[RMDB]
RNA sequence: GGGAACGACUCGAGUAGAGUCGAAAAACUGAGACUGUUUGGGCAGAGCCUUUGCCAGCUAGCACCUCUGCCCAACGGUCUGAACUUGUGGCCUUAACCAAGGCACUGACUUUGGGAAAAGACAAGACAACGUGAGGAGGUUCGCCUCCUCACGUUGAAAAGAAACAACAACAACAAC
Reactivity to DMS in 0.01 (KOAc 150mM, MgCl2 10mM, bicine 150mM(pH8.5), 24C), signal-to-noise 2, nucleotides 027 to 126: a160c100u000g040a060g000a000c000u000g000u030u020u010g010g000g000c010a010g010a000g010c130c060u010u010u020g010c000c120a140g000c160u010a120g000c060a180c300c000u000c000u000g000c010c000c000a000a000c010g010g000u000c010u000g010a030a140c070u000u010g000u000g000g000c140c020u000u000a040a270c010c010a000a000g010g010c010a130c150u000g000a070c000u010u000u000g010g000g000a060a040a030a050g010a080c000a010a020g020a300
Reactivity to 2A3 in 0.01 (KOAc 150mM, MgCl2 10mM, bicine 150mM(pH8.5), 24C), signal-to-noise 4, nucleotides 027 to 126: a000c090u100g010a000g010a000c010u010g020u300u050u030g000g000g010c000a000g010a010g060c040c070u220u150u150g090c060c020a110g120c140u130a010g050c010a010c030c000u000c000u000g010c000c000c000a000a000c000g000g010u000c000u000g000a030a030c020u040u020g020u010g110g110c000c020u010u010a030a000c020c000a000a010g000g020c110a220c260u150g170a250c010u010u010u010g010g000g020a000a300a060a000g010a040c010a000a010g040a040